Description
The data come from the RNA Mapping Database (RMDB), library OK1LIB. This 177-nucleotide RNA was probed chemically with 2A3 and DMS. For DMS the reverse transcriptase was MarathonRT. 2A3 is a SHAPE reagent: it acylates the 2'-hydroxyl of flexible nucleotides of all four kinds. The DMS profile rests on 732 reads. 2A3 adducts were read by reverse transcription with SuperScript II with manganese.
[RMDB]
RNA sequence: GGGAACGACUCGAGUAGAGUCGAAAAGGUGACCUGGACGGGAAGUAGGUCCAGCGACUGCUUCCGAAGCUUUGAUAAGAGCAACUCCAUCUACGUUGCUCAAGUAGGUGGUAGCAGCAAACACCGACGUGACCUCAUCCUUCGGGAUGAGGUCACGAAAAGAAACAACAACAACAAC
Reactivity to 2A3 in 0.01 (KOAc 150mM, MgCl2 10mM, bicine 150mM(pH8.5), 24C), signal-to-noise 1, nucleotides 027 to 126: g000g000u040g020a140c000c000u000g000g070a000c060g000g100g000a030a090g160u300a030g070g240u000c000c000a000g000c150g120a160c000u000g000c000u060u000c000c000g170a030a000g000c060u030u040u120g290a260u120a200a100g000a000g000c000a000a070c010u000c000c000a150u080c050u040a130c050g000u000u060g000c000u020c110a040a100g020u010a000g060g030u080g000g000u000a000g000c050a000g050c000a000a000a000c000a000c000c000g000a000
Reactivity to DMS in 0.01 (KOAc 150mM, MgCl2 10mM, bicine 150mM(pH8.5), 24C), signal-to-noise 1, nucleotides 027 to 126: g000g100u010g010a280c240c000u030g070g000a000c070g000g000g000a070a130g050u170a070g030g010u040c000c000a030g040c160g000a160c000u000g070c000u000u000c000c000g010a300a300g000c070u000u000u160g000a170u080a070a220g000a000g000c000a000a230c000u000c050c140a080u100c000u000a080c050g000u000u000g000c000u000c000a070a000g000u000a120g000g120u090g080g000u000a000g090c000a080g000c080a130a220a080c000a000c000c000g000a300